[RMDB]
RNA sequence: GGGAACGACUCGAGUAGAGUCGAAAAUGUGUAUUAAUCUUCAAAAUUUAAUAUCACUGAGGGUAGCAUAAGAGAAUAAGGAUUAAAUGAUACUGUGGAAAGAUUUAAGUUAGAUAUUCCAAGCUUUGAAAGAUUCAGAGAUGCCAGUAUCCAUCCAUCAUUACUGCUGAUUCGUCAGCAGUAAUGAAAAAGAAACAACAACAACAAC
Reactivity to 2A3 in 0.01 (KOAc 150mM, MgCl2 10mM, bicine 150mM(pH8.5), 24C), signal-to-noise 2, nucleotides 027 to 156: u130g040u000g010u010a040u060u070a110a060u080c040u140u080c070a100a100a090a060u050u100u140a090a040u060a020u140c050a030c050u050g020a030g010g000g050u030a010g000c040a070u040a270a020g030a000g060a090a120u070a060a040g060g030a020u090u090a130a140a000u090g010a000u000a010c020u050g030u060g060g050a040a090a090g070a100u170u120u100a090a020g050u070u080a060g030a060u090a080u130u030c010c010a040a000g030c070u020u040u030g100a200a160a070g040a140u170u000c010a000g010a000g000a050u040g050c000c010a000g000u000a010u000c030c000a040u000c000c000a000
Reactivity to DMS in 0.01 (KOAc 150mM, MgCl2 10mM, bicine 150mM(pH8.5), 24C), signal-to-noise 1, nucleotides 027 to 156: u000g020u010g000u000a000u000u010a000a020u020c030u050u000c140a080a090a060a120u010u020u000a070a020u000a020u000c010a040c000u000g000a100g040g040g030u000a020g020c010a100u010a070a080g010a160g060a110a050u000a050a170g010g000a140u000u010a030a090a090u000g010a070u000a020c030u000g010u040g030g020a130a160a180g010a070u020u000u000a040a120g040u010u000a060g000a130u000a250u000u000c030c000a100a130g040c030u020u010u000g010a090a120a140g010a210u010u010c060a050g010a060g020a060u000g020c070c000a080g050u000a030u000c010c030a070u000c060c060a170